Chemical mapping of a 177-nucleotide RNA with 2A3 and DMS. For 2A3 the reverse transcriptase was SuperScript II with manganese. The 2A3 profile rests on 3,763 reads. Values are in units of 0.01, from 0 to 300, in steps of 10.
[RMDB]
RNA sequence: GGGAACGACUCGAGUAGAGUCGAAAACCGGAUUUGGUAGUUGACAAAUCCUCCAUGCCGAGAUUAGUUUCAUUUUGCGUCUUUUGAAUUCGAAUAGUUCAUGUGAUGUGACGUAGUGGAACAUACCGGUAUUAUGUUUCUUCGGAAACAUAAUACCAAAAGAAACAACAACAACAAC
Reactivity to 2A3 in 0.01 (KOAc 150mM, MgCl2 10mM, bicine 150mM(pH8.5), 24C), signal-to-noise 5, nucleotides 027 to 126: c020c000g000g010a030u000u000u020g080g060u150a190g130u080u190g050a040c010a010a030a000u000c000c000u010c020c020a120u160g060c050c060g140a120g020a150u100u160a070g030u010u010u010c020a010u040u120u140u140g010c010g000u020c010u120u300u020u040g010a010a010u080u070c110g070a160a090u100a240g020u010u010c020a020u040g080u110g150a160u190g100u080g050a000c000g000u010a040g010u020g000g000a000a000c010a030u060a030c030c040
Reactivity to DMS in 0.01 (KOAc 150mM, MgCl2 10mM, bicine 150mM(pH8.5), 24C), signal-to-noise 4, nucleotides 027 to 126: c060c040g000g000a050u000u000u000g010g020u010a100g020u020u010g010a280c050a030a040a050u000c020c000u000c070c080a070u000g000c090c070g010a140g010a110u010u000a100g010u010u000u000c000a010u000u000u010u010g020c010g000u000c000u000u000u000u000g010a020a030u000u000c160g010a100a150u010a080g040u000u000c000a000u000g020u000g010a120u010g010u010g010a020c050g020u000a030g010u000g000g010a000a010c010a130u010a090c180c090